[RMDB]
RNA sequence: GGGAACGACUCGAGUAGAGUCGAAAAAUAAACAGCCUUAGCGUAUGUUUUCAUCCCAACAAAUAAUACGCGAGCUAACAAUGACUGUACGCGUAUUAAUCAGUCAAUAACGCUAAGGUAAAAAAAACAUAAGCCAUUGAUUCGUCAAUGGCUUAUGAAAAGAAACAACAACAACAAC
Reactivity to 2A3 in 0.01 (KOAc 150mM, MgCl2 10mM, bicine 150mM(pH8.5), 24C), signal-to-noise 2, nucleotides 027 to 126: a000u180a000a070a010c040a060g040c000c000u010u010a000g020c000g010u100a060u250g070u030u070u040u160c060a090u030c000c030c000a000a000c020a000a090a020u060a010a000u000a020c010g030c010g010a040g090c050u120a060a010c030a030a070u050g010a030c010u000g010u060a010c000g010c000g010u000a000u000u000a050a110u060c000a010g010u010c000a010a050u100a080a030c000g010c030u020a000a010g000g000u010a060a000a010a040a000a000a010a000
Reactivity to DMS in 0.01 (KOAc 150mM, MgCl2 10mM, bicine 150mM(pH8.5), 24C), signal-to-noise 2, nucleotides 027 to 126: a100u000a040a070a070c070a190g020c000c000u000u000a010g000c000g030u000a050u000g000u010u000u000u030c120a160u000c000c000c010a130a030c230a050a090a090u020a010a000u000a020c000g000c000g000a270g040c200u000a130a060c130a060a060u000g000a010c000u000g020u000a100c010g010c000g010u000a000u000u000a040a090u000c000a000g000u000c000a070a140u010a030a030c020g020c000u000a010a010g000g010u000a000a000a000a050a000a030a030a030
The record gives the reactivity of an RNA of 177 nucleotides to 2A3 and DMS. Conditions: 150 mM KOAc, 10 mM MgCl2 and 150 mM bicine (pH 8.5), 24 C. The 2A3 profile rests on 2,182 reads. Reactivities are given for positions 27 through 126. As a SHAPE reagent, 2A3 marks flexible, mostly unpaired nucleotides at the ribose 2'-OH. DMS adducts were read by reverse transcription with MarathonRT.